RNA sequence: GGGAACGACUCGAGUAGAGUCGAAAAAAAAGAUAUGGACACAGAACUACUCUCAUCAUGUACCGAAGAACUUUCAUCGGAAACGAUGAAAGGGAGGUAUGCACGGGAGCUGUGUCCUAAGUCAAAAGUAUCCAACAAACUUCGGUUUGUUGGAUACAAAAGAAACAACAACAACAAC
Reactivity to DMS in 0.01 (KOAc 150mM, MgCl2 10mM, bicine 150mM(pH8.5), 24C), signal-to-noise 1, nucleotides 027 to 126: a080a070a130a090g010a000u000a050u020g000g010a010c020a000c010a010g010a040a020c050u010a300c010u000c000u000c000a110u010c110a100u020g020u010a020c000c000g000a120a200g000a090a160c020u000u000u000c000a000u010c000g000g000a040a000a030c000g020a020u000g010a000a000a040g010g020g010a010g040g000u000a040u000g000c290a090c160g000g030g000a000g000c000u000g010u000g010u000c010c000u000a010a040g020u000c010a050a200a040a100
Reactivity to 2A3 in 0.01 (KOAc 150mM, MgCl2 10mM, bicine 150mM(pH8.5), 24C), signal-to-noise 1, nucleotides 027 to 126: a000a000a000a000g060a040u060a000u040g000g020a000c000a000c000a010g050a060a040c120u300a070c000u300c000u000c030a040u070c020a010u300g080u180a030c000c040g170a300a010g000a010a010c000u020u010u000c010a010u000c000g000g040a050a010a040c000g000a000u000g000a000a000a000g010g010g000a010g010g020u000a000u060g070c080a030c180g000g000g010a000g000c010u010g000u010g000u000c000c000u010a000a000g000u000c020a000a000a130a060